[RMDB]
RNA sequence: GGGAACGACUCGAGUAGAGUCGAAAAGGUCUCCUCGAAUCGGGCUGGCUCAUCCUCGAUUGCGAGCGGCGGUCCUGAGAACUCUUAUCUUCCUGCUUAGAAGAGGAGUCUCCUGGACGCCCCGCCCAUAGAUCGCAGUUCGCUGCGAUCAAAAGAAACAACAACAACAAC
Reactivity to DMS in 0.01 (KOAc 150mM, MgCl2 10mM, bicine 150mM(pH8.5), 24C), signal-to-noise 2, nucleotides 027 to 129: g040g030u020c070u010c000c000u020c050g020a080a040u010c010g030g000g090c100u020g020g030c100u020c060a030u040c000c000u010c040g030a090u010u040g030c100g020a050g030c090g000g050c020g060g050u020c010c020u040g020a010g030a070a070c020u030c000u050u060a180u050c020u000u020c000c130u000g050c240u090u080a140g010a020a020g000a000g000g000a000g000u000c030u040c010c100u050g030g000a040c020g000c000c000c000c000g000c040c050c030a120u070a140
Reactivity to 2A3 in 0.01 (KOAc 150mM, MgCl2 10mM, bicine 150mM(pH8.5), 24C), signal-to-noise 9, nucleotides 027 to 129: g070g020u010c010u020c020c010u010c010g050a030a030u040c000g010g020g020c040u020g050g040c030u020c060a090u060c020c010u030c030g050a050u040u110g100c040g010a100g020c050g000g000c030g070g120u020c000c000u030g010a040g010a100a050c000u000c000u030u110a070u090c000u000u030c010c040u130g180c130u240u270a020g000a020a000g000a010g010g000a000g010u000c040u000c020c080u020g010g000a000c010g050c000c000c000c000g030c010c000c000a040u100a030
An RNA of 170 nucleotides, treated with DMS and 2A3 and read out base by base. The RNA was probed in 150 mM KOAc, 10 mM MgCl2 and 150 mM bicine (pH 8.5) at 24 C. The 2A3 profile rests on 29,434 reads. It was measured as part of the RMDB library 15KLIB. DMS adducts were read by reverse transcription with MarathonRT.